[RMDB]
RNA sequence: GGGAACGACUCGAGUAGAGUCGAAAAGAUAUGGAUCCUAUACCUUCAACAGCUAUCGUCGGAAACGACGAUAGACAUGAAGAGUAUCAGGAUCCUAAGUCAAACCGUUUACGUUCGCGUAAACGGACCAAGGGUCUAACUUCGGUUAGACCCUUGGAAAAGAAACAACAACAACAAC
Reactivity to DMS in 0.01 (KOAc 150mM, MgCl2 10mM, bicine 150mM(pH8.5), 24C), signal-to-noise 2, nucleotides 027 to 126: g000a060u000a300u010g000g000a000u000c020c000u010a040u010a010c000c000u000u010c000a020a060c300a210g000c000u000a010u000c010g010u000c000g050g020a140a100a270c000g030a000c020g000a010u010a010g000a030c090a180u030g020a000a010g000a110g000u000a010u000c300a020g000g000a000u000c000c000u010a010a110g000u010c030a100a100a290c000c020g000u000u010u000a020c000g020u000u030c200g030c000g080u000a010a010a000c000g020g000a080
Reactivity to 2A3 in 0.01 (KOAc 150mM, MgCl2 10mM, bicine 150mM(pH8.5), 24C), signal-to-noise 2, nucleotides 027 to 126: g060a030u060a050u120g000g010a000u020c020c000u000a000u000a000c010c000u050u040c020a090a100c010a240g030c030u010a000u010c020g000u030c000g050g020a140a070a070c000g030a010c010g000a000u000a010g000a010c020a000u110g010a030a010g170a090g000u040a010u210c250a000g000g020a000u020c000c000u010a030a000g070u030c050a010a060a150c000c020g010u010u010u000a000c000g000u030u060c300g000c000g170u010a030a010a010c040g010g000a020
Record summary: The record gives the reactivity of an RNA of 177 nucleotides to DMS and 2A3. For 2A3, 3,647 sequencing reads were counted. Conditions: 150 mM KOAc, 10 mM MgCl2 and 150 mM bicine (pH 8.5), 24 C. For 2A3 the reverse transcriptase was SuperScript II with manganese. DMS adducts were read by reverse transcription with MarathonRT.